Conditions: 150 mM KOAc, 10 mM MgCl2 and 150 mM bicine (pH 8.5), 24 C. The record gives the reactivity of an RNA of 177 nucleotides to DMS.
RNA sequence: GGGAACGACUCGAGUAGAGUCGAAAAUACUAAUUGUUGCAACCACUCUCAAGUCUCUUACUGCACUGAGCUUUCCUGCAUGCAUGAUACUGGCUGUGUCAUCUGCGAGCAAGUGGGUAACACCUCCGUCACAAAACACCUUCGGGUGUUUUGUGACAAAAGAAACAACAACAACAAC
Reactivity to DMS in 0.01 (KOAc 150mM, MgCl2 10mM, bicine 150mM(pH8.5), 24C), signal-to-noise 1, nucleotides 027 to 126: u010a150c120u000a080a070u000u000g020u010u000g020c010a110a070c020c020a040c010u000c010u000c030a140a190g000u000c010u000c020u000u000a130c050u000g020c190a060c040u020g000a080g020c050u000u010u000c070c090u000g000c010a030u000g010c130a020u000g010a050u000a020c020u000g010g040c180u020g030u000g000u000c030a020u010c000u000g010c010g010a070g020c160a070a040g000u000g020g000g000u000a040a070c060a180c000c020u000c030c100